[RMDB]
RNA sequence: GGGAACGACUCGAGUAGAGUCGAAAAGUUGGCCAGAGUAGUCUAGAACUCCUGACCUCAAGUGAUCUGCCCGCCUCAUCCUCCCGAAGUGCUGAGAUUACAGGUGUGAGGUACAGCAUCUGGCCUCCAGUGUAAAGAGUUUCGACUCUUUACACUGAAAAGAAACAACAACAACAAC
Reactivity to 2A3 in 0.01 (KOAc 150mM, MgCl2 10mM, bicine 150mM(pH8.5), 24C), signal-to-noise 6, nucleotides 027 to 126: g070u080u050g010g000c010c000a000g010a010g050u210a000g010u070c030u100a060g040a130a040c010u010c020c000u030g060a030c000c010u020c040a080a060g030u030g070a040u010c010u040g060c020c030c010g020c010c000u030c020a130u060c010c040u030c000c010c010g030a070a020g040u070g040c030u030g020a020g010a060u040u090a040c010a020g060g010u040g040u030g060a020g030g040u090a140c010a010g020c020a120u010c010u010g010g000c010c000u000c000
Reactivity to DMS in 0.01 (KOAc 150mM, MgCl2 10mM, bicine 150mM(pH8.5), 24C), signal-to-noise 9, nucleotides 027 to 126: g010u000u000g010g020c010c000a030g000a070g010u010a060g010u000c030u010a130g010a190a090c030u000c070c020u000g000a070c030c010u000c050a060a110g020u000g010a030u000c030u000g000c070c100c040g000c050c020u000c040a080u000c040c040u000c020c030c030g010a070a070g020u000g010c050u010g010a060g000a050u000u000a070c030a070g020g020u000g010u010g000a060g010g010u000a070c050a090g000c090a100u000c010u000g000g000c010c010u000c060
Chemical mapping of a 177-nucleotide RNA with 2A3 and DMS. Reactivities are given for positions 27 through 126. For 2A3 the reverse transcriptase was SuperScript II with manganese. The 2A3 profile rests on 20,552 reads.